[RMDB]
RNA sequence: GGGAACGACUCGAGUAGAGUCGAAAAAAGCCCCAACCAGACGAUUGCCCCAGGAAUGAGUGAAGAUGGAGGGGUUCAGCAAGGCCCCCCUGCCACCCCAGACUCACACAUGUAGAUUCUGGCCCCACAUACACCUUCAGUUCGCUGAAGGUGUAUGAAAAGAAACAACAACAACAAC
Reactivity to DMS in 0.01 (KOAc 150mM, MgCl2 10mM, bicine 150mM(pH8.5), 24C), signal-to-noise 1, nucleotides 027 to 126: a150a170g000c130c000c000c100a100a110c050c040a080g010a050c080g010a060u000u010g010c030c020c010c020a040g000g000a130a040u000g000a140g020u000g000a050a120g000a160u000g000g020a090g010g000g030g000u000u000c130a060g040c100a060a060g000g000c040c000c000c030c010c010u010g000c020c080a060c090c080c010c040a050g000a110c050u010c050a030c030a130c190a140u000g030u010a060g000a140u020u000c010u000g010g010c050c000c000c000a200
Conditions: 150 mM KOAc, 10 mM MgCl2 and 150 mM bicine (pH 8.5), 24 C. Structure probing data (DMS) for a 177-nucleotide construct. It was measured as part of the RMDB library RFMREP. The DMS profile rests on 657 reads. For DMS the reverse transcriptase was MarathonRT.